[RMDB]
RNA sequence: GGGAACGACUCGAGUAGAGUCGAAAACUCCAACCUUGCCAGCGGACAGGCACGCAACGAAAGCGGGCCAAUUAGUUUGGUUGGACACCAGGGAGGGUUGGCGGAGUCUCGUCAACUGGCAGCUGGCCUCGCUGCAUGAGUUCGCUCAUGCAGCGAGAAAAGAAACAACAACAACAAC
Reactivity to DMS in 0.01 (KOAc 150mM, MgCl2 10mM, bicine 150mM(pH8.5), 24C), signal-to-noise 1, nucleotides 027 to 126: c170u010c010c000a010a000c060c000u000u000g060c060c000a000g020c040g000g010a000c140a080g000g020c000a000c010g040c000a090a200c300g000a100a170a020g000c000g040g020g000c020c010a090a060u010u010a140g000u000u050u000g000g000u020u000g020g000a090c110a180c010c000a080g000g000g010a110g010g000g000u000u000g000g000c030g000g010a270g010u010c070u090c000g000u000c000a000a000c050u000g000g000c070a040g000c000u000g000g020c050
Reactivity to 2A3 in 0.01 (KOAc 150mM, MgCl2 10mM, bicine 150mM(pH8.5), 24C), signal-to-noise 3, nucleotides 027 to 126: c060u030c000c000a010a010c010c000u010u070g050c020c010a030g020c010g020g020a030c030a060g030g040c000a000c000g030c000a070a270c150g280a150a070a010g000c010g000g010g000c000c000a010a120u160u100a070g050u070u030u090g000g020u000u020g000g020a020c000a050c070c030a020g010g030g020a130g030g040g040u060u000g000g000c060g040g010a250g190u030c120u100c080g000u020c000a010a030c000u090g170g020c040a010g040c020u010g000g000c000
Description: Structure probing data (DMS and 2A3) for a 177-nucleotide construct. For DMS, 1,242 sequencing reads were counted. Reactivities are rounded to 0.1 and cut off at 0 and 3. High DMS reactivity at an A or C suggests that its Watson-Crick edge is free. It was measured as part of the RMDB library OK1LIB.